[RMDB]
RNA sequence: GGGAACGACUCGAGUAGAGUCGAAAAGAUAUGGAGGUAAGAACUACAACAGCCGACGAAGCUUAUCGGAAACGAUAAGCAGAGGCUGCUGCUUACCUCCUAAGUCAAAGUCCCGUUCGCGGGACAACAAUAAACACUGCUUCGGCAGUGUUUAUUGAAAAGAAACAACAACAACAAC
Reactivity to DMS in 0.01 (KOAc 150mM, MgCl2 10mM, bicine 150mM(pH8.5), 24C), signal-to-noise 4, nucleotides 027 to 126: g000a030u000a300u000g000g000a020g010g010u000a000a010g000a120a060c110u030a300c030a010a010c000a000g010c000c000g000a130c190g000a090a120g010c000u000u000a000u000c000g010g000a090a070a130c000g010a000u000a000a010g010c000a020g000a100g000g020c000u000g010c010u000g000c000u010u000a000c000c000u010c000c000u000a010a050g010u000c030a090a140a150g000u000c000c000c000g010u010u010c130g020c020g000g000g000a010c010a050a080
Reactivity to 2A3 in 0.01 (KOAc 150mM, MgCl2 10mM, bicine 150mM(pH8.5), 24C), signal-to-noise 3, nucleotides 027 to 126: g040a020u100a040u190g000g020a000g020g000u010a000a000g020a100a070c130u240a020c300a070a000c010a010g000c000c030g180a300c060g030a160a000g010c000u000u000a000u000c000g030g010a070a050a040c000g000a000u010a010a010g010c000a000g000a000g010g020c000u010g020c010u010g010c000u010u010a000c000c000u000c010c000u000a010a000g000u000c020a030a090a030g000u000c030c020c030g020u090u070c300g000c020g040g000g010a010c000a000a020
Chemical mapping of a 177-nucleotide RNA with DMS and 2A3. Conditions: 150 mM KOAc, 10 mM MgCl2 and 150 mM bicine (pH 8.5), 24 C.